The record gives the reactivity of an RNA of 207 nucleotides to 2A3 and DMS.
It was measured as part of the RMDB library OK3TST.
The reactions ran in a buffer of 150 mM KOAc, 10 mM MgCl2 and 150 mM bicine (pH 8.5), at 24 C.
RNA sequence: GGGAACGACUCGAGUAGAGUCGAAAACUGGCCUGUGUCGAAGUACGUGAGUACUUCACUCUCUACGGGAGUAGAGAGACACAGAUCGUGGAGCGAUGUCUUGGAACUACUCCCGUAGUUCACGUAUGACUCACGUCAUACCAAGACGCCAGCCACGUGAGCACUAUUAGUUCGCUAAUAGUGCUCAAAAAGAAACAACAACAACAAC
Reactivity to 2A3 in 0.01 (KOAc 150mM, MgCl2 10mM, bicine 150mM(pH8.5), 24C), signal-to-noise 5, nucleotides 027 to 156: c000u000g000g000c000c000u020g000u000g010u020c010g010a070a000g010u070a010c000g010u030g030a030g000u090a160c030u130u140c010a050c000u170c010u000c010u000a000c000g010g000g000a010g000u000a000g010a000g000a010g000a010c000a000c000a010g010a000u020c020g020u100g160g150a140g150c010g020a020u000g000u020c010u020u000g020g010a050a040c000u000a000c010u010c000c020c000g000u000a000g010u080u140c110a080c060g090u120a070u170g030a020c000u010c030a010c040g000u000c000a010u030a060c000c000a010a000g000a000c000g000c000c010a000g000c010c000a060c030g060
Reactivity to DMS in 0.01 (KOAc 150mM, MgCl2 10mM, bicine 150mM(pH8.5), 24C), signal-to-noise 2, nucleotides 027 to 156: c000u000g010g020c000c000u010g020u000g010u020c040g010a040a050g000u000a020c010g030u010g010a250g030u010a040c050u000u000c040a230c100u010c020u000c020u000a040c000g030g000g010a230g030u010a010g010a120g000a160g000a050c020a010c020a040g040a020u000c000g040u020g020g000a190g030c000g010a050u000g020u000c000u000u000g000g020a040a190c010u000a000c020u000c030c060c080g020u000a000g020u020u000c130a130c060g020u010a090u000g000a070c010u000c140a090c170g020u000c080a070u000a110c040c020a030a040g000a020c020g020c010c000a050g020c000c050a090c100g000

The DMS profile rests on 3,812 reads. 2A3 adducts were read by reverse transcription with SuperScript II with manganese.